An RNA of 177 nucleotides, treated with DMS and 2A3 and read out base by base. For 2A3, 3,286 sequencing reads were counted. The RNA was probed in 150 mM KOAc, 10 mM MgCl2 and 150 mM bicine (pH 8.5) at 24 C. The DMS profile rests on 2,417 reads. It was measured as part of the RMDB library OK2TRN. Values cover nucleotides 27 to 126.

[RMDB]
RNA sequence: GGGAACGACUCGAGUAGAGUCGAAAAGCCACCAUCCUGAUCGUGACGCACAACAUCAACAUCGCCCGCACCGUGCCGGACAACAUGGGCAUGUUGUUCCGCAAGCAUUUGGUGAUGUUCGGGCCGCCUGUUCACAGCAUUUCGAUGCUGUGAACAGAAAAGAAACAACAACAACAAC
Reactivity to DMS in 0.01 (KOAc 150mM, MgCl2 10mM, bicine 150mM(pH8.5), 24C), signal-to-noise 3, nucleotides 027 to 126: g030c060c020a090c100c020a110u000c050c020u000g000a060u000c060g020u010g010a070c060g000c050a080c030a020a070c080a050u010c070a100a070c060a080u010c100g000c000c000c070g000c060a030c090c020g000u000g000c020c070g020g000a010c020a000a020c010a000u000g010g020g040c200a070u010g000u000u000g000u010u000c010c040g010c270a090a130g010c030a030u000u000u000g040g010u010g010a080u000g010u000u010c050g010g010g030c040c130g020c090
Reactivity to 2A3 in 0.01 (KOAc 150mM, MgCl2 10mM, bicine 150mM(pH8.5), 24C), signal-to-noise 3, nucleotides 027 to 126: g040c030c010a030c000c020a020u060c000c030u060g030a080u080c050g050u060g070a030c030g020c030a010c020a060a070c000a080u090c040a010a070c010a070u090c050g010c020c000c000g020c000a000c000c040g010u020g000c010c020g000g000a000c000a010a000c000a030u110g110g300g100c090a020u010g030u000u030g040u150u070c030c010g010c080a100a010g010c010a010u090u080u300g010g020u020g000a040u110g100u110u090c020g000g010g000c030c000g020c000